[RMDB]
RNA sequence: GGGAACGACUCGAGUAGAGUCGAAAAGUAGUGUCGCCCUAUGGCGGUUAUGGCAGGAAAAGGGUGCCGAGCAGCCUGUUAUAAUGGCUGGGCACAGCUUGGGCGAGUACUCUGCACUAGUGUGUGCACGAUUAUCCCACUUCGGUGGGAUAAUCGUAAAAGAAACAACAACAACAAC
Reactivity to 2A3 in 0.01 (KOAc 150mM, MgCl2 10mM, bicine 150mM(pH8.5), 24C), signal-to-noise 2, nucleotides 027 to 126: g060u080a000g030u000g040u040c000g040c060c000c000u100a130u100g060g030c100g120g060u220u170a150u200g180g010c050a050g070g060a030a190a000a020g140g060g020u020g010c020c010g020a090g120c010a000g020c000c010u040g100u130u200a290u080a200a170u150g010g000c000u030g010g000g000c040a020c020a010g030c020u050u020g000g020g020c000g010a000g020u010a000c020u010c030u050g000c000a000c030u070a160g120u100g060u100g010u000g120c000
Reactivity to DMS in 0.01 (KOAc 150mM, MgCl2 10mM, bicine 150mM(pH8.5), 24C), signal-to-noise 3, nucleotides 027 to 126: g000u010a030g020u000g020u000c020g020c000c000c030u000a140u030g020g010c020g030g020u000u010a060u020g000g000c020a110g000g010a110a080a130a120g010g020g010u010g020c000c000g000a170g010c020a020g010c000c000u000g010u010u010a140u010a170a090u010g010g010c000u000g000g000g020c040a010c000a070g010c010u000u000g000g010g010c000g000a040g000u000a040c030u000c070u000g010c010a010c000u000a130g020u000g020u010g010u000g010c030

This 177-nucleotide RNA was probed chemically with 2A3 and DMS. For DMS the reverse transcriptase was MarathonRT. The RNA was probed in 150 mM KOAc, 10 mM MgCl2 and 150 mM bicine (pH 8.5) at 24 C. For 2A3 the reverse transcriptase was SuperScript II with manganese.